[RMDB]
RNA sequence: GGGAACGACUCGAGUAGAGUCGAAAAGAUAUGGAAUUCUAUGGUGACCGAAGAACUCGGAAACGAGGGAGGUCACAUAGAGAUUCCUAAGUCAAAAGAUCUAUGGUACUUCGGUACCAUAGAUCAAGACACCAAUUACGUUCGCGUAAUUGGUGUCAAAAGAAACAACAACAACAAC
Reactivity to 2A3 in 0.01 (KOAc 150mM, MgCl2 10mM, bicine 150mM(pH8.5), 24C), signal-to-noise 2, nucleotides 027 to 126: g030a020u040a060u130g000g030a000a000u040u000c000u010a030u040g300g050u040g080a020c000c000g080a280a040g000a060a050c010u000c010g020g000a070a070a070c020g000a020g020g020g000a010g000g000u020c010a000c000a010u000a010g000a000g010a000u010u020c000c000u020a150a040g050u050c060a040a000a040a170g000a000u000c000u010a000u010g010g010u000a010c010u030u150c300g070g000u000a000c020c000a000u000a000g000a000u000c010a000a010
Reactivity to DMS in 0.01 (KOAc 150mM, MgCl2 10mM, bicine 150mM(pH8.5), 24C), signal-to-noise 1, nucleotides 027 to 126: g000a040u000a300u020g000g030a020a000u000u000c000u000a000u000g010g040u000g010a000c000c000g000a120a110g000a100a120c000u000c000g010g020a120a150a230c000g000a020g010g000g000a050g010g010u000c000a020c000a000u000a000g000a080g000a030u000u000c000c000u020a010a070g000u000c030a110a100a130a190g000a000u000c000u000a000u000g000g000u000a000c000u000u000c230g010g020u000a000c000c000a000u000a000g000a000u000c000a060a040

Conditions: 150 mM KOAc, 10 mM MgCl2 and 150 mM bicine (pH 8.5), 24 C. An RNA of 177 nucleotides, treated with 2A3 and DMS and read out base by base. DMS adducts were read by reverse transcription with MarathonRT. For 2A3 the reverse transcriptase was SuperScript II with manganese.